RNA sequence: GGGAACGACUCGAGUAGAGUCGAAAACCUGUAUUUCAUUAGUUAGUAAGCUUGCUGAUUCAUAACCAGAAAGUUGACUCCAAGGAUACGCAGGAUAGCAAACAGUGCUUUCUGCAUCACCAAAGAUUAAAUUGUGAUGUUUAGUGUCCAAUAAUAACUAUAUCGAGCACUUCGGUGCUCGAUAUAGAAAAGAAACAACAACAACAAC
Reactivity to 2A3 in 0.01 (KOAc 150mM, MgCl2 10mM, bicine 150mM(pH8.5), 24C), signal-to-noise 1, nucleotides 027 to 156: c020c000u040g040u060a200u000u130u030c050a040u080u260a080g030u170u070a020g000u050a060a000g000c010u000u000g000c000u000g000a020u070u000c020a030u040a110a070c030c000a020g080a060a060a100g030u020u000g040a020c010u010c040c140a090a120g000g000a000u030a020c020g020c040a020g000g140a030u140a050g000c040a170a100a030c060a120g200u040g010c000u000u020u030c000u020g000c000a000u000c000a010c000c020a130a050a000g060a050u230u200a150a080a180u130u040g000u000g000a040u000g000u060u200u130a000g000u000g040u000c030c000a010a010u240a250a010u160a030a010
Source: RMDB library OK3TST, as collected in RNAgym.
An RNA of 207 nucleotides, treated with 2A3 and read out base by base.
The RNA was probed in 150 mM KOAc, 10 mM MgCl2 and 150 mM bicine (pH 8.5) at 24 C.
2A3 adducts were read by reverse transcription with SuperScript II with manganese.
The 2A3 profile rests on 330 reads.